[RMDB]
RNA sequence: GGGAACGACUCGAGUAGAGUCGAAAAAAAGAUAUGGAACUUGGCAAGACGCACUGAAUCGAGGAUCUGAAAUCGGAAACGAUUUCAGGGAGAUUCAAACGUUGAUGACCCAAGUUCCUAAGUCAAACCAUUGAAUAUGCUUCGGCAUAUUCAAUGGAAAAGAAACAACAACAACAAC
Reactivity to DMS in 0.01 (KOAc 150mM, MgCl2 10mM, bicine 150mM(pH8.5), 24C), signal-to-noise 2, nucleotides 027 to 126: a030a060a150g000a010u000a300u000g010g020a000a040c010u010u000g000g000c010a070a100g010a020c000g020c080a110c300u000g000a020a020u000c010g000a120g040g000a020u010c000u000g000a010a000a000u000c000g020g000a150a090a150c000g010a020u000u010u000c000a010g040g010g010a040g040a040u000u000c000a020a080a140c010g010u000u000g000a120u010g000a120c300c000c000a010a000g000u000u000c000c000u000a010a090g020u010c020a090a080a160
Reactivity to 2A3 in 0.01 (KOAc 150mM, MgCl2 10mM, bicine 150mM(pH8.5), 24C), signal-to-noise 1, nucleotides 027 to 126: a000a000a050g040a040u110a070u110g000g000a000a010c000u000u000g000g030c050a110a150g010a040c010g010c050a120c230u050g010a000a000u020c010g070a300g060g030a010u020c010u030g000a000a010a010u000c000g000g030a050a070a050c020g010a000u000u000u000c000a000g000g010g000a010g010a000u010u010c000a040a060a000c000g010u000u070g080a300u160g020a050c020c000c000a000a000g000u000u000c000c000u020a060a000g000u010c040a080a050a180